[RMDB]
RNA sequence: GGGAACGACUCGAGUAGAGUCGAAAAAUAUUAUACUAACACUACUCACAAACGUAACCCUAGCCUCCCUACUCGUACUAAUCGCAUUCUGACUACCCCAACUAAACGCAUAUUCAGAAAAAACAAGCCCAUAUGAAUGUGGAUUUGACCCCAUAGGCCGAAUAGUAAGGUUCGCCUUACUAUUCGGAAAAGAAACAACAACAACAAC
Reactivity to DMS in 0.01 (KOAc 150mM, MgCl2 10mM, bicine 150mM(pH8.5), 24C), signal-to-noise 1, nucleotides 027 to 156: a130u020a090u010u020a220u000a180c110u000a090a060c100a070c030u000a050c010u010c040a100c040a080a080a150c110g020u000a090a090c050c020c000u010a060g030c030c010u000c010c010c060u000a030c040u010c050g030u000a200c060u020a130a090u000c020g000c030a100u000u000c000u000g020a160c030u000a070c030c020c000c020a020a180c080u020a040a040a060c080g020c040a020u010a060u000u000c010a060g010a000a100a050a030a040a090c050a130a140g000c010c020c060a060u020a090u000g000a020a030u000g030u020g030g010a140u000u000u000g000a250c010c000c000c030a150u000a060g000g000
Reactivity to 2A3 in 0.01 (KOAc 150mM, MgCl2 10mM, bicine 150mM(pH8.5), 24C), signal-to-noise 2, nucleotides 027 to 156: a000u130a090u120u220a100u050a100c050u150a250a040c040a020c040u030a030c010u040c030a000c030a080a140a050c110g010u030a000a010c000c020c040u010a020g020c000c020u050c010c000c000u020a010c020u010c000g020u040a050c000u060a010a070u020c020g000c030a000u050u000c010u040g070a070c000u060a040c020c040c010c030a060a000c010u160a040a010a010c020g020c030a020u030a040u150u100c040a000g140a010a050a000a000a000a000c000a010a040g000c000c010c040a010u100a060u120g030a050a000u020g020u010g010g000a000u090u050u050g070a040c000c000c030c080a020u150a040g090g000

Structure probing data (DMS and 2A3) for a 207-nucleotide construct. Conditions: 150 mM KOAc, 10 mM MgCl2 and 150 mM bicine (pH 8.5), 24 C. For DMS the reverse transcriptase was MarathonRT. The 2A3 profile rests on 970 reads. 2A3 adducts were read by reverse transcription with SuperScript II with manganese.